[RMDB]
RNA sequence: GGGAACGACUCGAGUAGAGUCGAAAACGAGAACGGUUCGCCGUUCUCGAAAAGUCAGAAGGUAAAACCAAGCGAUAAAUAAAACUGACAAUAAAAACGCAAAAACCGAGUGCUUCGGCACUCGGAACAUGAACAAGGUGUUCGCACCUUGUUCAUGAAAAGAAACAACAACAACAAC
Reactivity to DMS in 0.01 (KOAc 150mM, MgCl2 10mM, bicine 150mM(pH8.5), 24C), signal-to-noise 1, nucleotides 027 to 126: c040g000a040g020a030a020c000g000g020u020u010c300g010c000c000g000u010u000c000u000c010g000a020a000a100a100g010u000c030a000g010a210a050g010g000u000a100a050a100a300c000c050a080a080g000c020g020a030u010a050a050a200u000a060a090a080a100c030u000g010a000c020a040a120u000a000a050a010a090a100c080g010c030a060a120a020a040a030c000c010g020a010g000u000g000c010u010u000c170g020g000c000a000c000u000c000g020g020a000a030
Reactivity to 2A3 in 0.01 (KOAc 150mM, MgCl2 10mM, bicine 150mM(pH8.5), 24C), signal-to-noise 2, nucleotides 027 to 126: c010g000a000g000a000a000c010g020g010u040u050c130g040c040c000g000u000u000c000u000c000g000a000a000a000a010g010u020c010a010g030a110a050g180g050u140a040a040a070a130c020c030a030a030g060c050g110a100u130a180a190a000u130a020a140a060a030c000u020g010a000c030a020a010u120a030a120a020a020a000c040g000c050a100a100a010a020a020c000c000g010a000g000u000g000c000u000u000c060g070g000c010a000c000u010c000g000g020a000a000
An RNA of 177 nucleotides, treated with DMS and 2A3 and read out base by base.
The RNA was probed in 150 mM KOAc, 10 mM MgCl2 and 150 mM bicine (pH 8.5) at 24 C.
The DMS profile rests on 939 reads.
Source: RMDB library M2PK50, as collected in RNAgym.
For DMS the reverse transcriptase was MarathonRT.